[RMDB]
RNA sequence: GGGAACGACUCGAGUAGAGUCGAAAAAAGGCCCUGCAAGGCCACACCGAGGCGCGCUUCGUUCAUCAUGGUGAACAUGGCGCGCAGGCCCUUGUUGGCCUCGCCGAUCAGAUAGCCGGUCGCCUCACGACGAUAUACCUUUCGAGGUAUAUCGUCGAAAAGAAACAACAACAACAAC
Reactivity to DMS in 0.01 (KOAc 150mM, MgCl2 10mM, bicine 150mM(pH8.5), 24C), signal-to-noise 3, nucleotides 027 to 126: a130a060g000g000c040c020c130u000g020c080a100a050g020g000c020c020a090c200a060c080c070g030a120g000g010c020g000c000g010c000u000u000c140g010u000u000c010a010u000c090a100u010g070g010u010g000a010a020c000a110u020g000g000c020g010c000g030c000a000g000g000c080c040c020u010u010g000u000u000g000g000c000c000u000c060g000c060c040g000a090u010c110a110g010a130u000a110g010c090c040g000g000u000c050g030c030c000u000c090a240
Reactivity to 2A3 in 0.01 (KOAc 150mM, MgCl2 10mM, bicine 150mM(pH8.5), 24C), signal-to-noise 1, nucleotides 027 to 126: a000a000g050g010c060c000c000u020g040c040a030a020g020g020c020c020a020c020a010c040c040g050a160g160g000c000g020c010g000c000u050u060c230g020u000u010c000a020u000c020a070u300g240g010u020g030a010a000c000a030u100g000g000c010g000c010g000c020a000g000g010c000c030c000u040u050g040u040u060g030g000c000c000u000c010g000c010c020g010a070u060c020a070g100a220u140a080g090c080c000g030g000u060c010g040c020c020u070c020a080
Source information
An RNA of 177 nucleotides, treated with DMS and 2A3 and read out base by base. The DMS profile rests on 2,572 reads. 2A3 is a SHAPE reagent: it acylates the 2'-hydroxyl of flexible nucleotides of all four kinds. The RNA was probed in 150 mM KOAc, 10 mM MgCl2 and 150 mM bicine (pH 8.5) at 24 C. For DMS the reverse transcriptase was MarathonRT.